[RMDB]
RNA sequence: GGGAACGACUCGAGUAGAGUCGAAAAGAUAUGGAGGUGGCGCGUGAUGACCCUUACCGAGGUCGGAAACGAUACAGUAAGGCAAGCGCCUCACCUCCUAAGUCAAAGUAGCUGUUCGCAGCUACAACCAAAUAAGUUCCUUCGGGAACUUAUUUGGAAAAGAAACAACAACAACAAC
Reactivity to 2A3 in 0.01 (KOAc 150mM, MgCl2 10mM, bicine 150mM(pH8.5), 24C), signal-to-noise 2, nucleotides 027 to 126: g010a030u070a050u130g000g000a020g000g010u010g000g000c020g000c010g000u030g030a200u150g030a120c030c000c030u000u000a010c010c020g070a160g030g030u010c010g000g020a100a070a020c020g000a000u010a040c000a010g040u000a000a000g010g030c020a110a040g000c010g000c000c000u000c010a000c000c010u000c000c000u010a120a000g010u000c040a000a100a170g010u020a010g000c010u000g070u120u090c300g000c140a000g010c010u000a000c000a010a010
Reactivity to DMS in 0.01 (KOAc 150mM, MgCl2 10mM, bicine 150mM(pH8.5), 24C), signal-to-noise 3, nucleotides 027 to 126: g000a060u020a300u010g000g000a020g010g030u000g010g000c300g030c010g010u000g010a110u010g000a110c300c000c000u000u000a000c000c010g030a300g000g000u000c000g000g000a090a110a130c000g000a020u000a000c010a040g010u000a000a010g000g010c010a070a110g000c010g000c010c010u000c000a000c000c000u000c000c000u000a000a050g010u000c040a100a070a150g010u010a010g000c000u000g000u000u010c260g030c000a020g000c000u000a000c000a080a200